About this RNA: Conditions: 150 mM KOAc, 10 mM MgCl2 and 150 mM bicine (pH 8.5), 24 C. Structure probing data (DMS) for a 177-nucleotide construct.

[RMDB]
RNA sequence: GGGAACGACUCGAGUAGAGUCGAAAAUGGGGGAAAUGCCCGCCGAACUGCGCAUCACCGGUGGUGCUGCGCGCUCGAAGGCGCUGCGCGGCACGCUUUCGGCGGCGGUCAAUGCGCCGGUGCGCGACAGUGGGCAGGAGUUCGCUCCUGCCCACUGAAAAGAAACAACAACAACAAC
Reactivity to DMS in 0.01 (KOAc 150mM, MgCl2 10mM, bicine 150mM(pH8.5), 24C), signal-to-noise 1, nucleotides 027 to 126: u000g030g000g040g000g010a070a090a060u000g010c020c010c000g000c140c050g000a120a060c140u000g020c000g030c100a140u000c050a060c070c010g000g000u010g000g030u000g030c010u000g020c000g020c000g030c020u000c000g000a080a030g000g030c040g000c230u020g000c020g030c160g020g000c000a090c010g000c090u000u000u000c010g020g000c000g010g000c000g000g000u000c120a090a040u000g000c010g000c000c000g000g020u000g020c300g000c000g000a070
It was measured as part of the RMDB library OK2TST.